[RMDB]
RNA sequence: GGGAACGACUCGAGUAGAGUCGAAAAUAGGUUGAAUUCGUUCAACCUACAGGCAAGCAAGCAGCGCAAGGAGACAAGGCGAUAAUAAGAUAGCGCAUGCUGAUACAUCGGUCUUCGGACCGAUGAACGAGAUUGGAUAAUUCGUUAUCCAAUCUCGAAAAGAAACAACAACAACAAC
Reactivity to 2A3 in 0.01 (KOAc 150mM, MgCl2 10mM, bicine 150mM(pH8.5), 24C), signal-to-noise 9, nucleotides 027 to 126: u040a000g000g000u010u020g010a020a010u090u080c180g040u080u010c010a000a000c000c000u000a030c020a000g080g010c050a030a070g010c020a040a010g000c020a020g010c020g010c040a050a100g110g040a100g040a040c060a080a040g080g050c040g070a040u060a180a060u100a090a080g130a160u130a050g010c020g010c040a040u050g000c010u020g000a030u030a160c010a000u000c000g000g000u000c000u010u050c180g050g000a000c000c000g000a000u000g000a020a000
Reactivity to DMS in 0.01 (KOAc 150mM, MgCl2 10mM, bicine 150mM(pH8.5), 24C), signal-to-noise 8, nucleotides 027 to 126: u000a010g010g010u010u000g000a020a030u000u000c230g020u000u000c000a000a000c000c000u000a010c110a070g010g010c120a090a090g010c120a120a050g020c030a040g020c040g010c030a100a120g010g010a110g000a070c100a050a060g010g010c050g010a060u000a070a060u000a090a080g010a100u000a060g010c020g020c040a060u000g010c020u000g000a120u010a150c000a000u000c000g010g010u000c000u000u010c150g010g000a010c000c000g010a000u000g000a050a110
Chemical mapping of a 177-nucleotide RNA with 2A3 and DMS. The RNA was probed in 150 mM KOAc, 10 mM MgCl2 and 150 mM bicine (pH 8.5) at 24 C. DMS adducts were read by reverse transcription with MarathonRT. For 2A3, 25,249 sequencing reads were counted. For 2A3 the reverse transcriptase was SuperScript II with manganese.